Structure probing data (2A3 and DMS) for a 177-nucleotide construct.
The data come from the RNA Mapping Database (RMDB), library TTRDES.
RNA sequence: GGGAACGACUCGAGUAGAGUCGAAAAGAUAUGGAAGAGUCUCUUUCACGUUGAAAUCAUUUCGGAAACGAAAUGAUGGAGUGACAGAGAGCUCUUCCUAAGUCAAAUCUGAUGUUCGCAUCAGAAAGAAAAUCUGUAAGUUCGCUUACAGAUUUUCAAAAGAAACAACAACAACAAC
Reactivity to 2A3 in 0.01 (KOAc 150mM, MgCl2 10mM, bicine 150mM(pH8.5), 24C), signal-to-noise 1, nucleotides 027 to 126: g000a010u060a030u130g000g000a010a000g000a000g070u010c000u000c000u050u020u000c020a040c060g230u300u060g050a020a000a000u000c000a000u010u000u030c010g000g040a050a080a090c000g000a000a000a000u000g010a000u010g000g030a020g000u010g030a010c030a030g000a000g010a010g000c000u000c000u010u000c000c000u000a030a000g020u000c060a000a030a190u010c000u000g000a030u010g040u060u140c300g020c150a020u000c000a010g010a010a060a030
Reactivity to DMS in 0.01 (KOAc 150mM, MgCl2 10mM, bicine 150mM(pH8.5), 24C), signal-to-noise 3, nucleotides 027 to 126: g010a040u000a300u020g020g020a010a010g000a000g010u000c000u000c000u000u010u010c000a010c000g020u010u010g000a170a120a010u000c010a010u000u000u010c000g000g030a150a120a210c010g010a010a010a000u010g010a020u000g000g000a080g010u000g000a020c100a020g010a050g010a060g010c000u010c000u000u000c000c010u000a010a070g020u010c030a110a160a230u000c000u000g000a020u000g010u000u020c290g020c010a000u000c000a020g000a050a120a200